[RMDB]
RNA sequence: GGGAACGACUCGAGUAGAGUCGAAAAUAAAAGAUGAAUAAAUCAGCAUGGUGAUCAUGCAGUUAAACGGAGGAUCACGAAAAGAUAAAGUGAUCCACCGAUAUACAAGAUCACGAAAUAAAAAAAAGUGUUAAUAUAUCUUCGGAUAUAUUAACACAAAAGAAACAACAACAACAAC
Reactivity to 2A3 in 0.01 (KOAc 150mM, MgCl2 10mM, bicine 150mM(pH8.5), 24C), signal-to-noise 2, nucleotides 027 to 126: u110a010a090a010a000g100a050u090g050a110a140u170a220a120a060u080c030a040g060c030a050u090g170g000u030g010a000u010c010a010u030g000c050a010g040u030u120a030a090a030c000g000g040a020g000g000a000u000c020a000c030g000a030a170a030a030g160a050u240a150a080a020g000u000g000a000u000c010c000a000c000c000g000a010u010a000u000a100c010a020a030g000a030u010c020a010c010g020a040a140a060u230a050a110a040a000a000a020a020a030
Reactivity to DMS in 0.01 (KOAc 150mM, MgCl2 10mM, bicine 150mM(pH8.5), 24C), signal-to-noise 1, nucleotides 027 to 126: u000a160a070a100a080g010a000u010g010a130a110u030a140a170a090u010c000a110g030c070a050u020g030g010u000g000a000u000c000a110u000g000c020a040g010u000u000a060a120a140c030g000g000a090g010g000a000u000c000a000c010g010a090a080a130a140g010a050u000a080a130a280g010u000g000a000u000c000c010a010c000c010g000a030u000a000u020a020c030a110a120g000a030u010c010a020c010g000a080a080a070u080a030a000a020a000a060a070a080a110